[RMDB]
RNA sequence: GGGAACGACUCGAGUAGAGUCGAAAAGGUUCUCCUGCUCUUCCGGAGCCUUCUUUCGAGGUCUUCCGCGUCUUUUCUUGCUUGGAUCCAUUUCUCGAGGACGUCCUCCCUUCCUCCCCUCCGGGUCAUAGCAGGGGCUUCGGCCCCUGCAAAAGAAACAACAACAACAAC
Reactivity to DMS in 0.01 (KOAc 150mM, MgCl2 10mM, bicine 150mM(pH8.5), 24C), signal-to-noise 1, nucleotides 027 to 129: g010g020u060u000c080u000c050c040u020g100c050u020c020u020u020c030c090g060g000a110g000c210c070u020u020c040u070u020u040c140g040a120g000g150u000c080u020u020c030c020g000c040g000u000c050u000u000u060u000c060u040u090g000c040u020u080g000g000a060u000c080c000a030u000u000u080c020u000c080g010a080g030g010a140c040g000u020c060c000u030c050c000c060u000u070c080c000u030c040c060c000c000u040c000c000g030g000g000u030c020a090u090a000
Reactivity to 2A3 in 0.01 (KOAc 150mM, MgCl2 10mM, bicine 150mM(pH8.5), 24C), signal-to-noise 2, nucleotides 027 to 129: g070g030u050u000c020u000c000c030u000g040c020u030c010u160u000c000c100g050g020a010g030c010c000u060u000c050u000u040u080c100g050a050g020g040u000c060u010u000c010c010g060c030g050u020c060u050u080u040u000c000u040u070g060c040u020u040g040g000a000u060c020c000a060u160u090u040c000u030c020g030a010g000g030a070c000g040u030c000c020u000c000c000c020u020u020c030c000u010c000c000c030c000u000c010c000g000g000g000u000c030a030u030a010

Structure probing data (DMS and 2A3) for a 170-nucleotide construct. Conditions: 150 mM KOAc, 10 mM MgCl2 and 150 mM bicine (pH 8.5), 24 C. For 2A3, 2,646 sequencing reads were counted.